The record gives the reactivity of an RNA of 207 nucleotides to 2A3. High 2A3 reactivity points to a flexible backbone, as in loops and unpaired stretches. For 2A3 the reverse transcriptase was SuperScript II with manganese. The reactions ran in a buffer of 150 mM KOAc, 10 mM MgCl2 and 150 mM bicine (pH 8.5), at 24 C.
[RMDB]
RNA sequence: GGGAACGACUCGAGUAGAGUCGAAAAGAUGUCCCUGGCGAUGUCUAUCACGUGGUGCUUACCAGACUUCUUAUCGCGAGGUACAACGGCGAUGAUCGGUCUCCUGUCCGCUAUCACCAGAGAACCUAGCAGGUCCGGUAGGAUCUGUUCGUAUCCGCUCGUAGCGUAGGUUCGCCUACGCUACGAGAAAAGAAACAACAACAACAAC
Reactivity to 2A3 in 0.01 (KOAc 150mM, MgCl2 10mM, bicine 150mM(pH8.5), 24C), signal-to-noise 1, nucleotides 027 to 156: g060a020u060g020u000c000c020c060u020g050g020c010g020a020u030g000u000c040u090a120u140c060a070c130g090u080g000g000u070g080c030u080u080a060c020c020a050g040a080c000u120u000c070u120u250a050u030c040g010c040g030a040g000g050u070a020c050a120a010c130g020g000c000g020a090u030g030a000u110c020g000g010u040c030u020c020c070u090g030u040c020c000g000c020u040a030u090c020a000c090c000a080g030a000g000a190a020c040c020u000a020g010c040a030g000g010u010c000c020g030g120u150a200g090g000a000u000c000u000g030u000u010c030g040u170a070u050c020c060g000